[RMDB]
RNA sequence: GGGAACGACUCGAGUAGAGUCGAAAAAGAAAUGUUGGAGCAAGGAAAGUAAGAGAUAACGCAAUUACCUAUCUAACACUUCCUAUUCAUGUUGAUGAGAAGGAUAUUGAUGCUUCCAGUAGUGAAGGUAUCACGCCUCUGUUAGUGCAACAUGAAAGUAAAUACAAUGUUUCGACAUUGUAUUUACAAAAGAAACAACAACAACAAC
Reactivity to DMS in 0.01 (KOAc 150mM, MgCl2 10mM, bicine 150mM(pH8.5), 24C), signal-to-noise 3, nucleotides 027 to 156: a080g010a060a030a030u010g010u000u000g000g010a080g040c150a110a130g020g030a100a120a120g010u000a090a110g000a180g010a120u000a060a100c110g000c080a110a120u000u000a180c020c020u000a130u020c020u000a040a070c070a070c050u000u000c010c000u010a180u000u000c010a010u010g010u000u000g010a100u000g010a120g010a060a050g010g000a100u000a090u000u000g010a030u010g020c020u000u000c010c000a110g010u010a180g010u000g020a010a010g020g020u000a020u000c000a020c150g000c000c000u000c020u000g010u000u000a070g040u010g020c000a010a020c000a020u000g000a040a040a130
Reactivity to 2A3 in 0.01 (KOAc 150mM, MgCl2 10mM, bicine 150mM(pH8.5), 24C), signal-to-noise 9, nucleotides 027 to 156: a010g050a010a040a030u040g010u010u020g030g020a070g070c160a090a060g100g040a130a050a040g070u140a150a050g080a030g020a210u150a170a050c100g010c110a060a060u120u060a080c010c000u030a040u000c010u020a030a020c010a010c030u010u010c010c010u030a090u000u020c000a000u000g010u010u010g020a070u070g040a020g030a170a100g050g010a040u130a080u260u070g000a010u010g010c000u010u000c020c030a110g110u170a030g020u240g120a020a010g070g030u030a000u010c010a010c060g010c010c000u000c000u020g090u170u100a130g060u130g200c000a000a000c000a000u010g000a010a010a010
Chemical mapping of a 207-nucleotide RNA with DMS and 2A3. It was measured as part of the RMDB library OK3TST. The 2A3 profile rests on 9,992 reads. Values cover nucleotides 27 to 156. DMS adducts were read by reverse transcription with MarathonRT.